RNA sequence: GGGAACGACUCGAGUAGAGUCGAAAAGAGGAUGGACUGGACGAUUCGCAGCAUCACUUUGUCGCUAGGAAGACUCAUGGUUAAUCCUCCACCGACCGAACGAUUUCCAUAUUGCGUCCGGCAUUGGAAGUGUACCCUAAUUCGUUAGGGUACACUUAAAAGAAACAACAACAACAAC
Reactivity to 2A3 in 0.01 (KOAc 150mM, MgCl2 10mM, bicine 150mM(pH8.5), 24C), signal-to-noise 6, nucleotides 027 to 126: g020a010g020g000a010u050g030g020a010c010u020g020g010a010c020g040a050u020u030c100g000c300a000g000c000a030u100c040a060c180u140u180u250g100u110c070g010c030u040a080g060g060a040a020g010a030c010u010c040a140u180g040g000u020u030a030a020u010c000c000u040c010c000a030c030c020g030a100c000c010g020a040a030c020g030a050u040u050u050c040c010a050u120a060u170u200g030c010g020u010c030c020g020g000c040a090u030u120g090g040
Reactivity to DMS in 0.01 (KOAc 150mM, MgCl2 10mM, bicine 150mM(pH8.5), 24C), signal-to-noise 9, nucleotides 027 to 126: g010a040g010g020a030u000g010g020a050c010u010g010g020a040c040g000a300u000u000c030g010c110a060g000c010a080u010c090a130c250u010u000u010g010u000c100g020c010u000a110g010g000a040a040g010a300c300u000c030a060u010g010g010u000u010a120a070u000c020c010u000c010c090a140c080c040g010a100c030c010g010a020a030c030g000a120u000u000u000c070c060a090u010a100u000u000g010c040g000u000c010c010g000g010c090a100u010u000g000g010

An RNA of 177 nucleotides, treated with 2A3 and DMS and read out base by base. The RNA was probed in 150 mM KOAc, 10 mM MgCl2 and 150 mM bicine (pH 8.5) at 24 C. The data come from the RNA Mapping Database (RMDB), library OK2TST.